[RMDB]
RNA sequence: GGGAACGACUCGAGUAGAGUCGAAAAUCACAAAGCGGAUUUGGCUCGGUUGGGAGGGGUCCAGACCGAACCUCUGGUGUUCCUGUGUCCGAGACACAGAAUUCGCACCAUAAACAACGGGAGAUUCGAGUAUGAUAGCGUUCGCGCUAUCAUACUCAAAAGAAACAACAACAACAAC
Reactivity to 2A3 in 0.01 (KOAc 150mM, MgCl2 10mM, bicine 150mM(pH8.5), 24C), signal-to-noise 5, nucleotides 027 to 126: u120c020a020c070a140a110a040g020c070g030g010a040u020u010u060g050g000c010u000c010g050g010u050u090g040g040g030a080g030g020g000g030u000c000c010a020g020a030c010c040g040a020a060c000c010u040c050u020g030g000u020g040u010u060c020c000u050g020u020g020u040c060c200g100a090g040a090c030a000c000a070g080a030a070u100u090c050g000c000a020c000c000a040u190a040a150a020c120a030a020c070g030g020g000a120g020a030u080u120c070
Reactivity to DMS in 0.01 (KOAc 150mM, MgCl2 10mM, bicine 150mM(pH8.5), 24C), signal-to-noise 2, nucleotides 027 to 126: u040c120a130c070a070a070a150g040c000g030g000a060u000u000u000g000g020c000u000c040g030g000u000u010g000g000g010a020g000g010g000g000u020c030c060a020g010a070c040c080g050a090a090c160c240u000c040u020g010g000u040g000u000u010c050c010u000g000u030g000u000c000c180g010a090g000a070c020a030c100a060g000a020a020u030u010c140g000c000a060c070c010a070u010a040a150a080c210a140a080c040g010g000g000a090g010a160u020u000c130
Chemical mapping of a 177-nucleotide RNA with 2A3 and DMS. The data come from the RNA Mapping Database (RMDB), library OK1LIB. The RNA was probed in 150 mM KOAc, 10 mM MgCl2 and 150 mM bicine (pH 8.5) at 24 C. 2A3 adducts were read by reverse transcription with SuperScript II with manganese. Reactivities are rounded to 0.1 and cut off at 0 and 3.